[RMDB]
RNA sequence: GGGAACGACUCGAGUAGAGUCGAAAAGAUAUGGAUCCGUGAACUACACGGAACUGGAGCGUUGAAAUAGUUAAAUCGGAAACGAUUUAACUAUGGAGCUCCUCAGUACGUGCACGGAUCCUAAGUCGUCUAUUUAAUGCUUCGGCAUUAAAUAGACAAAAGAAACAACAACAACAAC
Reactivity to 2A3 in 0.01 (KOAc 150mM, MgCl2 10mM, bicine 150mM(pH8.5), 24C), signal-to-noise 2, nucleotides 027 to 126: g030a070u150a050u290g010g000a010u000c000c000g010u000g000a090a080c110u270a040c300a000c000g020g010a020a000c020u030g020g010a000g000c020g150u300u040g030a050a060a020u010a000g000u010u010a010a010a010u020c020g010g070a070a020a130c000g000a000u000u000u000a000a000c000u000a000u000g000g010a010g000c000u010c010c010u010c000a010g000u000a010c000g000u000g050c000a000c000g000g000a000u000c010c000u000a010a000g050u060c070
Reactivity to DMS in 0.01 (KOAc 150mM, MgCl2 10mM, bicine 150mM(pH8.5), 24C), signal-to-noise 2, nucleotides 027 to 126: g020a030u010a300u020g020g030a000u010c010c000g000u000g000a120a020c100u000a300c030a010c050g000g020a140a090c170u000g000g000a030g010c000g020u000u000g000a150a130a020u000a020g000u000u000a000a010a000u010c000g010g010a190a140a240c010g000a010u000u000u000a000a020c000u000a010u000g000g000a120g030c000u000c000c010u020c030a030g010u000a100c020g010u010g000c000a020c000g000g000a050u000c000c000u000a010a100g010u000c130
The record gives the reactivity of an RNA of 177 nucleotides to 2A3 and DMS. For 2A3, 5,252 sequencing reads were counted. 2A3 adducts were read by reverse transcription with SuperScript II with manganese. The reactions ran in a buffer of 150 mM KOAc, 10 mM MgCl2 and 150 mM bicine (pH 8.5), at 24 C.